Overview:
The record gives the reactivity of an RNA of 177 nucleotides to DMS and 2A3. Source: RMDB library RFMREP, as collected in RNAgym. For DMS, 2,102 sequencing reads were counted. Reactivities are rounded to 0.1 and cut off at 0 and 3. The 2A3 profile rests on 5,912 reads. The reactions ran in a buffer of 150 mM KOAc, 10 mM MgCl2 and 150 mM bicine (pH 8.5), at 24 C.
[RMDB]
RNA sequence: GGGAACGACUCGAGUAGAGUCGAAAAGCCGGCUUGGCACUCGCGAACACCGCGAUUUCACUUAUAACUCGCGGCGUUAGCUCUGUGUCAAACCGGCAAAACACACCAUCUCUUCGGAGAUGGUGUGGUUGUCGUAUACCUUCGGGUAUACGACAACAAAAGAAACAACAACAACAAC
Reactivity to DMS in 0.01 (KOAc 150mM, MgCl2 10mM, bicine 150mM(pH8.5), 24C), signal-to-noise 2, nucleotides 027 to 126: g030c000c010g030g000c020u000u010g000g000c010a000c010u010c140g010c000g010a040a000c010a030c000c000g020c000g010a030u010u010u000c220a160c300u040u010a100u010a070a030c170u000c000g000c000g010g010c020g010u000u000a060g000c010u020c030u000g000u000g000u000c000a000a020a030c000c000g010g000c000a000a010a060a290c020a010c000a010c010c000a010u000c010u000c000u010u000c190g000g000a010g020a010u000g010g000u000g000u010g000
Reactivity to 2A3 in 0.01 (KOAc 150mM, MgCl2 10mM, bicine 150mM(pH8.5), 24C), signal-to-noise 3, nucleotides 027 to 126: g010c000c000g000g000c010u010u010g000g000c010a000c010u030c020g000c010g000a010a000c020a010c000c010g000c010g010a010u020u120u120c140a100c120u240u210a130u060a300a030c020u010c010g000c000g020g000c000g000u000u000a000g010c000u040c070u150g010u000g000u010c000a010a000a000c000c010g000g000c000a000a010a000a010c010a000c000a000c000c000a000u000c000u010c000u020u090c190g090g000a000g000a010u000g000g020u000g000u010g000